This 177-nucleotide RNA was probed chemically with 2A3 and DMS. Source: RMDB library OK2TST, as collected in RNAgym. High 2A3 reactivity points to a flexible backbone, as in loops and unpaired stretches. The reactions ran in a buffer of 150 mM KOAc, 10 mM MgCl2 and 150 mM bicine (pH 8.5), at 24 C.
RNA sequence: GGGAACGACUCGAGUAGAGUCGAAAACUUUCGAUGACAUGCUGUGGAACGAGUUCCCGGCCAUGGUGGCCAGGGAGAAACCCGUCAGCGUCAAGGGCUACAGGGUAAAGUUUGGGACCGUGAGGUACUAUUUAUACGACUUCGGUCGUAUAAAUAGAAAAGAAACAACAACAACAAC
Reactivity to 2A3 in 0.01 (KOAc 150mM, MgCl2 10mM, bicine 150mM(pH8.5), 24C), signal-to-noise 5, nucleotides 027 to 126: c020u070u130u100c050g090a090u070g030a010c020a060u150g010c010u010g020u080g070g040a110a040c040g030a090g080u050u010c010c000c000g000g010c020c010a130u250g220g090u100g120g000c000c050a150g040g000g000a070g030a040a080a010c010c010c010g040u060c040a010g010c000g020u060c030a030a070g060g020g020c030u120a040c080a060g000g000g060u060a080a070a040g040u080u100u090g020g010g020a010c020c010g020u060g040a050g030g020u020a030
Reactivity to DMS in 0.01 (KOAc 150mM, MgCl2 10mM, bicine 150mM(pH8.5), 24C), signal-to-noise 8, nucleotides 027 to 126: c080u000u000u000c080g010a170u010g000a060c060a080u010g030c020u000g020u010g000g010a090a070c090g010a120g000u000u000c010c000c000g010g000c010c000a150u010g030g030u010g020g020c000c010a080g040g000g000a050g010a040a100a080c050c010c020g010u010c080a040g020c030g010u000c060a060a120g010g000g010c040u000a070c090a100g010g000g000u000a050a060a070g000u000u000u010g010g000g010a060c040c030g010u010g000a120g010g010u000a130